This 177-nucleotide RNA was probed chemically with DMS and 2A3. Values cover nucleotides 27 to 126. It was measured as part of the RMDB libraries RFM100 and RFMREP. The reactions ran in a buffer of 150 mM KOAc, 10 mM MgCl2 and 150 mM bicine (pH 8.5), at 24 C.

RNA sequence: GGGAACGACUCGAGUAGAGUCGAAAACCUUGAAGACUGAAGUGGGGAAGGGUUCCAUGGUAACAGCAGUUGGACAUGGGUUAGUCGGUCCUAAGAGAUAGGGAACCUCCGUUUUAAAGAAGGCUCUAGUACUUAUCGGUUUCGACCGAUAAGUACUAAAAGAAACAACAACAACAAC
Reactivity to DMS in 0.01 (KOAc 150mM, MgCl2 10mM, bicine 150mM(pH8.5), 24C), signal-to-noise 2, nucleotides 027 to 126: c000c000u000u020g000a180a070g010a030c010u010g000a080a070g010u000g000g000g000g000a120a040g010g000g030u040u000c010c010a020u000g030g010u010a100a110c120a090g010c080a080g000u000u010g000g000a150c120a030u000g040g020g040u030u010a080g010u030c070g000g010u000c010c000u010a040a090g000a090g000a070u030a070g000g000g020a130a060c040c000u010c040c010g030u020u000u010u010a070a060a100g000a020a030g040g000c050u000c040u000
Reactivity to 2A3 in 0.01 (KOAc 150mM, MgCl2 10mM, bicine 150mM(pH8.5), 24C), signal-to-noise 2, nucleotides 027 to 126: c000c000u020u120g140a050a040g060a100c030u050g040a060a020g090u100g020g040g000g020a080a030g020g040g000u070u090c000c000a020u020g150g030u170a130a020c000a030g200c040a040g060u040u040g080g000a020c020a120u050g000g040g000u060u110a090g010u100c020g030g000u000c050c040u030a090a000g040a000g050a120u130a140g050g020g000a020a020c040c000u000c000c000g060u130u030u010u170a050a100a090g140a030a020g050g010c000u000c030u030